[RMDB]
RNA sequence: GGGAACGACUCGAGUAGAGUCGAAAAGAUAUGGAAGCUAUGAGCAUCGAUCUGGUCAUUCGGAAACGAAUGCCAGGGAGCUCCUAGCUUCCUAAGUCAAACCACCUUUACUUCGGUAAAGGUGGAACACACGGUGUGUGUUCGCACACACCGUGUGAAAAGAAACAACAACAACAAC
Reactivity to 2A3 in 0.01 (KOAc 150mM, MgCl2 10mM, bicine 150mM(pH8.5), 24C), signal-to-noise 2, nucleotides 027 to 126: g000a020u020a010u070g000g000a010a000g030c000u000a000u040g010a000g000c010a050u300c100g140a120u000c020u000g000g080u300c040a010u000u020c000g000g010a020a020a000c000g000a010a000u010g010c010c000a000g030g010g000a060g000c000u020c000c000u010a000g000c000u010u000c000c000u000a010a000g000u020c000a010a060a140c020c000a010c000c040u000u000u010a020c010u040u110c300g140g000u000a000a000a000g000g000u020g010g000a010a010
Reactivity to DMS in 0.01 (KOAc 150mM, MgCl2 10mM, bicine 150mM(pH8.5), 24C), signal-to-noise 2, nucleotides 027 to 126: g030a010u000a080u020g000g010a030a000g010c000u010a000u000g000a030g020c010a300u000c210g020a010u010c030u010g000g000u000c030a020u000u010c000g010g010a030a000a100c000g020a000a000u000g010c000c000a000g020g020g020a070g000c000u010c010c050u000a000g000c000u000u010c000c000u000a000a020g000u000c030a150a180a250c020c010a010c000c000u010u010u000a000c000u000u010c180g030g000u000a000a000a040g000g010u000g000g010a020a060

Background: Structure probing data (2A3 and DMS) for a 177-nucleotide construct.